Structure probing data (DMS and 2A3) for a 207-nucleotide construct. It was measured as part of the RMDB library RNAMAK. For 2A3, 1,760 sequencing reads were counted. Reactivities are given for positions 27 through 156.

[RMDB]
RNA sequence: GGGAACGACUCGAGUAGAGUCGAAAACUCCAUGUUCGCAUGGAGAAAAAACCUUUGUGAGCGACAUGUCGGUGUACUUUUGACGAUCCCAUUGGGAUCGAUAAGUACACAGCGACAACAGCGCUCACUCUGGUAAAAACGCGGAUUCGUCCGCGAAUCAUAAUAUCGCCUUCGGGCGAUAUUAUGAAAAAGAAACAACAACAACAAC
Reactivity to DMS in 0.01 (KOAc 150mM, MgCl2 10mM, bicine 150mM(pH8.5), 24C), signal-to-noise 1, nucleotides 027 to 156: c010u000c030c000a030u000g000u000u000c300g060c030a050u000g000g020a030g010a020a020a110a140a080a010c000c000u000u000u000g020u000g000a020g030c030g020a030c100a300u020g030u000c010g000g030u000g020u000a010c000u000u000u010u000g020a300c240g000a050u000c000c010c020a300u000u000g050g080g000a000u000c000g000a040u000a000a010g030u000a000c030a030c000a000g030c000g000a020c010a030a130c080a190g090c000g060c000u020c000a000c000u010c010u000g010g000u010a000a070a000a040a060c020g010c000g000g020a110u000u000c300g000u000c000c010g000c000g020a020a100
Reactivity to 2A3 in 0.01 (KOAc 150mM, MgCl2 10mM, bicine 150mM(pH8.5), 24C), signal-to-noise 2, nucleotides 027 to 156: c000u000c000c000a010u010g040u050u120c260g000c140a000u000g000g000a000g010a090a000a000a010a000a010c010c010u010u010u010g000u010g000a010g010c000g100a130c080a140u090g010u020c020g000g000u000g000u000a010c020u010u040u100u190g170a080c020g010a010u000c000c050c040a210u130u300g010g000g000a000u000c000g000a000u000a010a000g010u000a000c000a010c000a010g000c000g010a000c010a000a010c030a020g090c010g020c010u000c000a000c000u000c010u010g010g000u050a080a080a020a040a040c020g000c000g000g000a000u050u050c150g070u040c060c000g000c010g000a010a040